[RMDB]
RNA sequence: GGGAACGACUCGAGUAGAGUCGAAAAGAAUAGGUGGGAGGGGCAACCCGACGGUGAAAUACCACCCCUUUUGGCGUUACUUUGCUAACUUGGAAUAACAGUACCUUCUAGUUUAGGCUAGAAUGGUCCAAAUAAUCUUGUUCGCAAGAUUAUUUGGAAAAGAAACAACAACAACAAC
Reactivity to DMS in 0.01 (KOAc 150mM, MgCl2 10mM, bicine 150mM(pH8.5), 24C), signal-to-noise 3, nucleotides 027 to 126: g000a130a110u010a100g000g030u000g000g030g010a050g000g000g020g030c180a100a120c020c000c010g000a050c250g000g010u000g000a060a050a070u000a100c020c030a140c000c010c070c020u000u010u000u000g010g010c040g000u000u000a060c130u000u000u000g000c040u000a040a080c070u000u000g010g000a160a090u000a070a100c170a120g000u000a080c010c000u000u000c000u000a010g000u000u000u000a130g010g000c000u000a000g000a020a020u020g020g000u000
Reactivity to 2A3 in 0.01 (KOAc 150mM, MgCl2 10mM, bicine 150mM(pH8.5), 24C), signal-to-noise 2, nucleotides 027 to 126: g020a030a040u110a020g060g000u030g020g020g050a050g020g000g000g070c030a050a040c020c030c000g010a020c020g000g010u010g050a060a090a050u110a080c010c000a030c000c000c000c000u020u000u070u060g080g000c020g030u070u070a100c060u300u150u140g020c040u020a060a100c060u000u110g090g100a160a100u140a170a050c060a070g080u050a040c020c000u010u000c010u000a000g000u010u080u070a210g090g000c000u000a000g080a010a050u200g000g000u010
Background:
Chemical mapping of a 177-nucleotide RNA with DMS and 2A3. 2A3 is a SHAPE reagent: it acylates the 2'-hydroxyl of flexible nucleotides of all four kinds. It was measured as part of the RMDB library RFMREP. The 2A3 profile rests on 1,824 reads.